[RMDB]
RNA sequence: GGGAACGACUCGAGUAGAGUCGAAAAAUCAGAGGGCGCUAUCAUGCAAACUAGGAUUGUCUGCUCAUGCACAGAACCAACUACCGAUAACUAACAGUGCGUGAAGGUUAGUUAUUCCAUAUUAAUUAAAACUCGUAAUUCUUCGGAAUUACGAGAACCCAUAUAGAAAGUUCGCUUUCUAUAUGGGAAAAGAAACAACAACAACAAC
Reactivity to DMS in 0.01 (KOAc 150mM, MgCl2 10mM, bicine 150mM(pH8.5), 24C), signal-to-noise 2, nucleotides 027 to 156: a100u010c060a080g030a130g010g020g000c100g020c050u010a080u000c040a090u020g000c040a010a100a080c100u000a130g020g040a160u010u000g010u020c020u000g000c030u010c090a080u010g020c050a050c010a070g020a080a090c040c040a030a130c070u010a200c060c030g020a090u010a000a070c030u000a010a080c020a090g000u000g000c040g030u000g010a120a120g030g020u000u010a020g020u000u000a040u000u000c030c020a060u000a180u000u000a070a160u000u010a050a060a050a050c000u000c000g030u000a000a020u000u000c000u000u010c300g020g020a030a010u000u000a000c000g010a010g010a010a040
Reactivity to 2A3 in 0.01 (KOAc 150mM, MgCl2 10mM, bicine 150mM(pH8.5), 24C), signal-to-noise 7, nucleotides 027 to 156: a000u040c040a030g010a040g060g030g000c020g000c020u090a090u280c070a040u230g020c040a030a060a030c030u050a050g040g030a040u040u030g040u050c030u040g020c010u010c020a030u050g000c020a030c010a050g060a080a060c040c020a040a080c040u130a100c040c080g030a020u010a020a010c000u000a000a000c020a040g030u010g070c010g020u040g050a050a060g070g000u010u010a000g000u000u020a020u090u100c010c000a050u090a060u240u260a140a090u100u130a050a070a060a090c000u000c000g000u000a000a000u010u000c000u020u020c080g070g000a000a000u010u000a000c000g000a000g000a000a000